[RMDB]
RNA sequence: GGGAACGACUCGAGUAGAGUCGAAAAUACAGGCACCGGCGUAUCCGUGUCGGUAACAGGCUGCCCGACCGCCAGUGAGGAGUUAGCAUCACUCAGAGUCUGGCUGAUGUUGACAGUGAUGGUGCCGCACCAUAAUCAUGUUCGCAUGAUUAUGGUGAAAAGAAACAACAACAACAAC
Reactivity to DMS in 0.01 (KOAc 150mM, MgCl2 10mM, bicine 150mM(pH8.5), 24C), signal-to-noise 7, nucleotides 027 to 126: u040a080c100a120g000g010c010a020c010c020g010g010c080g020u030a080u040c050c090g010u010g000u000c020g000g000u010a080a110c110a080g000g020c050u020g010c090c000c020g000a050c050c020g000c080c030a070g000u010g000a110g000g010a130g010u020u020a040g010c060a060u010c070a030c020u000c030a050g010a230g000u020c020u000g010g000c110u000g000a050u000g010u010u000g000a050c030a080g000u010g000a100u010g000g020u000g010c000c030g010
Reactivity to 2A3 in 0.01 (KOAc 150mM, MgCl2 10mM, bicine 150mM(pH8.5), 24C), signal-to-noise 9, nucleotides 027 to 126: u200a010c040a030g020g000c010a000c010c020g040g010c050g050u100a100u090c060c050g050u070g020u110c020g000g010u020a070a030c020a020g110g040c040u080g080c030c010c010g010a020c010c000g030c020c010a040g020u040g070a080g060g020a090g050u060u110a050g040c040a060u030c010a010c010u020c010a020g020a040g190u050c040u020g010g000c020u020g010a040u040g000u020u020g020a040c040a050g030u050g100a120u100g010g000u010g000c000c000g000
The data come from the RNA Mapping Database (RMDB), library OK1LIB. An RNA of 177 nucleotides, treated with DMS and 2A3 and read out base by base. For DMS the reverse transcriptase was MarathonRT. The reactions ran in a buffer of 150 mM KOAc, 10 mM MgCl2 and 150 mM bicine (pH 8.5), at 24 C.